Chemical mapping of a 177-nucleotide RNA with 2A3 and DMS. Conditions: 150 mM KOAc, 10 mM MgCl2 and 150 mM bicine (pH 8.5), 24 C. It was measured as part of the RMDB library OK2TST.
RNA sequence: GGGAACGACUCGAGUAGAGUCGAAAAACAGGGAUAACAAAAGCUAGUCAAUCCUUAGGCAUAAAUAUGUAAAGCGAGAGGUGAAUUAAAGAAUGAAUAGGACAUAGAUAGGUCAAGGGACACUUGCGAUUAGCAGGGUAUUCGUACCCUGCUAAUCAAAAGAAACAACAACAACAAC
Reactivity to 2A3 in 0.01 (KOAc 150mM, MgCl2 10mM, bicine 150mM(pH8.5), 24C), signal-to-noise 3, nucleotides 027 to 126: a000c070a040g050g000g040a050u050a190a000c020a040a110a040a020g020c020u040a010g050u060c030a020a070u020c010c000u040u060a020g010g040c000a020u040a100a140a040u180a040u060g070u100a150a060a030g050c070g030a030g010a030g070g090u080g080a040a030u110u110a120a080a050g080a040a060u020g030a030a020u000a090g060g000a020c010a020u060a010g100a060u060a050g050g000u010c030a010a040g020g040g010a020c030a000c060u020u050g010c000
Reactivity to DMS in 0.01 (KOAc 150mM, MgCl2 10mM, bicine 150mM(pH8.5), 24C), signal-to-noise 5, nucleotides 027 to 126: a080c060a080g020g010g020a090u000a080a070c110a090a050a100a100g020c060u010a040g020u010c070a110a100u000c010c030u000u000a100g020g000c040a070u010a030a060a120u010a070u010g010u010a050a090a070g000c060g010a070g010a050g010g020u010g010a080a060u010u000a040a070a040g000a080a060u010g000a060a050u000a070g010g000a070c040a020u010a020g000a130u000a050g000g020u000c040a030a030g000g000g010a050c120a050c030u000u000g000c300